[RMDB]
RNA sequence: GGGAACGACUCGAGUAGAGUCGAAAAGGGGUCCUCCCGAUAAGGAGCGCUAAGCAACAGCGUGUACUGAAGCCUCCACGGUACACGACAUGCUUAGUCGCUCCUUUUGACGGGAGGACGGAGGCACCCAAAAGGCUAAGUGUUCGCACUUAGCCAAGGAAUAUCACAUGUUCGCAUGUGAUAUUCCAAAAGAAACAACAACAACAAC
Reactivity to DMS in 0.01 (KOAc 150mM, MgCl2 10mM, bicine 150mM(pH8.5), 24C), signal-to-noise 2, nucleotides 027 to 156: g020g010g040g020u000c010c010u000c000c010c000g050a140u000a030a020g000g010a070g020c000g010c010u010a020a040g030c020a160a200c130a130g030c000g060u000g010u000a020c000u000g000a040a080g000c020c010u010c010c010a300c000g000g020u010a000c010a030c000g010a050c040a260u000g010c000u000u000a000g020u000c040g000c010u000c000c010u000u000u000u000g040a170c060g000g000g010a040g010g020a000c040g020g020a020g110g050c010a080c000c000c020a090a070a160a190g020g010c010u010a000a000g020u010g010u000u010c300g000c000a040c000u000u000a010g010c010c000a000a030
Reactivity to 2A3 in 0.01 (KOAc 150mM, MgCl2 10mM, bicine 150mM(pH8.5), 24C), signal-to-noise 4, nucleotides 027 to 156: g040g010g040g010u000c000c000u010c000c010c000g030a060u090a250a060g010g000a000g020c000g020c000u000a000a000g030c040a020a110c060a190g020c010g030u000g000u000a000c000u040g040a070a010g010c000c000u000c000c000a030c020g040g000u000a000c010a000c000g070a050c030a150u260g000c000u000u000a000g000u030c000g000c000u020c000c000u010u010u000u010g010a000c010g010g000g000a000g000g000a000c000g000g000a000g000g000c010a040c000c000c000a070a090a010a060g020g000c000u010a000a010g000u040g030u070u140c230g100c070a010c000u020u000a000g010c000c000a000a000
This 207-nucleotide RNA was probed chemically with DMS and 2A3. For 2A3, 4,670 sequencing reads were counted. For DMS, 3,776 sequencing reads were counted. It was measured as part of the RMDB library RNAMAK. Conditions: 150 mM KOAc, 10 mM MgCl2 and 150 mM bicine (pH 8.5), 24 C. Values cover nucleotides 27 to 156.